The record gives the reactivity of an RNA of 207 nucleotides to 2A3 and DMS. For DMS the reverse transcriptase was MarathonRT. For 2A3 the reverse transcriptase was SuperScript II with manganese. Conditions: 150 mM KOAc, 10 mM MgCl2 and 150 mM bicine (pH 8.5), 24 C. For 2A3, 956 sequencing reads were counted. Values are in units of 0.01, from 0 to 300, in steps of 10.
[RMDB]
RNA sequence: GGGAACGACUCGAGUAGAGUCGAAAAAUACAUACUGACACCGGUUGCUCAACAGGCUGUGUGGGACAAUAGAAUAACAAGGCUGUCAAUUUGAGCUUGACGGCUGCAAACCAAAUGGAGUGAAAUCGUAACCGGACUCACUUCGGUGAGUCCGGAACAAGCAAGAGUAGUUCGCUACUCUUGCUUGAAAAGAAACAACAACAACAAC
Reactivity to 2A3 in 0.01 (KOAc 150mM, MgCl2 10mM, bicine 150mM(pH8.5), 24C), signal-to-noise 2, nucleotides 027 to 156: a000u100a000c020a010u110a020c020u090g080a020c020a020c040c040g060g050u050u120g020c020u010c030a060a080c080a140g050g030c020u010g020u000g020u050g070g050g030a040c000a030a050u100a090g150a090a070u150a150a050c080a130a010g040g010c000u000g000u000c010a010a020u090u090u090g030a030g010c010u000u000g010a000c000g000g000c000u040g010c020a050a020a020c040c010a050a040a160u120g010g000a090g040u130g100a080a040a080u110c090g060u120a060a100c000c000g000g000a000c000u000c000a020c010u010u120c150g040g000u000g000a000g000u030c000c000g010g000a000a000
Reactivity to DMS in 0.01 (KOAc 150mM, MgCl2 10mM, bicine 150mM(pH8.5), 24C), signal-to-noise 2, nucleotides 027 to 156: a130u000a050c040a160u000a120c080u000g000a070c010a100c030c070g000g010u000u000g000c050u000c020a140a080c060a040g020g010c030u000g030u000g040u000g000g060g030a080c040a050a090u000a110g000a100a090u000a080a100c030a100a140g000g010c000u000g000u000c000a010a060u010u000u010g010a180g000c260u000u000g010a010c000g000g000c000u010g000c050a050a120a130c050c010a050a100a070u000g000g040a070g030u010g000a050a090a160u000c030g010u000a110a130c000c010g000g000a020c000u000c000a030c010u000u010c280g080g020u000g000a020g000u020c000c010g030g010a010a000